[RMDB]
RNA sequence: GGGAACGACUCGAGUAGAGUCGAAAAAGUGAGCCAGGCCGGGGUGCCCAAUAUAUCCGAGCUGCAGGUAUGGGGAAAGGAGUUGCCUGGGUCCUAUAGUUUGGAAAGGCAAGGAGAGUCUGAACCCACUUUGCUAACCUUUCGAGGUUAGCAAAGUAAAAGAAACAACAACAACAAC
Reactivity to DMS in 0.01 (KOAc 150mM, MgCl2 10mM, bicine 150mM(pH8.5), 24C), signal-to-noise 1, nucleotides 027 to 126: a110g000u020g000a090g000c030c010a030g030g010c020c060g010g010g000g020u000g030c020c010c030a120a110u000a060u030a150u000c070c010g000a140g000c040u010g000c030a090g010g000u010a030u020g010g000g020g000a090a050a120g010g000a110g000u020u000g000c000c020u000g000g030g020u000c010c010u000a070u000a000g010u000u030u000g000g000a100a140a110g010g000c010a070a080g020g000a200g000a020g000u010c040u000g010a170a270c020c020c030